[RMDB]
RNA sequence: GGGAACGACUCGAGUAGAGUCGAAAAGAUAUGGAAUAUUUGUCAGCCUACUAUCCCGUUUGACGACUAUCGGAAACGAUAGUCCGAGGGAUAGAGGCUUGGAUUUAAUAUUCCUAAGUCAAACUCUGUUGCAACGAUUCGUCGUUGCAACAGAGAAUGUAAUACGUCGUUUCGACGACGUAUUACAAAAAGAAACAACAACAACAAC
Reactivity to DMS in 0.01 (KOAc 150mM, MgCl2 10mM, bicine 150mM(pH8.5), 24C), signal-to-noise 1, nucleotides 027 to 156: g010a130u000a250u000g010g020a010a000u010a000u000u000u010g030u010c020a050g000c000c010u010a170c010u020a000u000c000c000c000g000u000u020u000g000a180c210g000a040c000u000a000u000c000g000g000a150a130a250c030g030a060u000a000g000u010c000c000g010a070g020g000g010a030u000a000g010a060g000g010c010u000u000g050g020a020u010u000u020a030a040u000a010u000u000c010c010u010a040a120g000u000c050a090a090a150c010u010c000u010g020u000u000g050c020a010a040c000g000a050u000u010c290g030u000c000g040u000u000g010c020a010a000c010a000g020a000g000a050a010
Reactivity to 2A3 in 0.01 (KOAc 150mM, MgCl2 10mM, bicine 150mM(pH8.5), 24C), signal-to-noise 4, nucleotides 027 to 156: g020a010u070a050u100g000g000a000a000u000a020u020u020u020g010u010c010a010g010c000c010u240a300c010u000a300u010c000c010c020g040u160u130u200g040a050c050g000a000c000u000a010u000c000g000g060a140a030a050c020g000a000u000a000g000u000c000c000g020a020g000g010g000a000u000a000g000a000g000g000c000u000u060g000g010a000u090u280u150a000a000u000a000u000u010c000c000u000a110a010g050u030c020a010a010a120c000u000c000u000g010u000u000g000c010a000a010c000g020a010u050u070c210g060u010c000g000u140u010g010c000a000a000c000a000g000a000g000a000a000